[RMDB]
The record gives the reactivity of an RNA of 207 nucleotides to 2A3. The RNA was probed in 150 mM KOAc, 10 mM MgCl2 and 150 mM bicine (pH 8.5) at 24 C. The data come from the RNA Mapping Database (RMDB), library M2RFPK.
RNA sequence: GGGAACGACUCGAGUAGAGUCGAAAACCUAUCCAAAAUGAGAUCCCAUCUUGCACACUGUGCUAAUUUGAGAUUCUCAUGCCUCCUACUUGUAGAGAUCUGGACUAGAAGUCAGGGCAUCUGACUCAAUACAUUCGUCAGUUCGCUGACGAAUGAACUACUGACGCAGGUUCGCCUGCGUCAGUAGAAAAGAAACAACAACAACAAC
Reactivity to 2A3 in 0.01 (KOAc 150mM, MgCl2 10mM, bicine 150mM(pH8.5), 24C), signal-to-noise 1, nucleotides 027 to 156: c000c000u000a120u220c040c070a060a080a020a030u010g010a010g000a020u000c020c000c000a000u000c010u020u050g000c020a080c030a100c120u210g000u010g000c080u230a050a120u020u020u000g000a010g000a000u260u050c000u000c020a010u010g040c010c010u050c000c000u040a170c030u140u100g070u090a030g020a050g060a180u080c070u090g000g020a010c020u030a060g020a130a000g070u000c010a000g010g020g200c040a070u020c030u010g030a040c030u030c080a060a040u110a070c000a010u000u000c000g020u010c010a000g020u000u120c150g070c080u040g000a000c000g000a000a010u000g000a000a010